[RMDB]
RNA sequence: GGGAACGACUCGAGUAGAGUCGAAAACACUAAUGCAACGAAACUGGAAACAAUAGACCCAGUUAAGGUUAAAAAUGAAUUUAAAUCUGAUACUACCACUGAAGAAAGUAGUUCUUCCAAUAAGCAACAUAGAUUGAGGGUUCGCCCUCAAUCUAUGAAAAGAAACAACAACAACAAC
Reactivity to DMS in 0.01 (KOAc 150mM, MgCl2 10mM, bicine 150mM(pH8.5), 24C), signal-to-noise 2, nucleotides 027 to 126: c030a160c090u020a140a110u020g000c080a030a090c000g030a130a020a070c010u000g000g000a110a100a070c150a090a090u010a060g020a110c130c000c020a020g010u000u000a100a050g020g000u030u000a000a120a040a090a030u000g000a120a060u000u010u010a040a050a090u000c040u000g050a060u000a050c000u020a020c140c040a090c110u000g020a090a040g020a060a070a110g000u010a060g000u020u000c050u000u000c030c110a040a060u020a060a110g000c080a050a150
Reactivity to 2A3 in 0.01 (KOAc 150mM, MgCl2 10mM, bicine 150mM(pH8.5), 24C), signal-to-noise 2, nucleotides 027 to 126: c050a000c000u090a090a110u250g020c050a090a060c020g060a100a010a000c010u010g000g060a240a100a020c050a110a110u090a240g030a060c000c000c000a000g000u010u010a050a080g080g010u050u140a010a080a020a080a100u130g050a020a060u150u140u130a100a110a040u060c050u030g010a050u040a090c010u030a050c010c020a040c060u030g010a010a020g050a110a110a010g090u050a000g020u050u030c000u020u000c010c000a040a190u130a140a060g070c020a000a050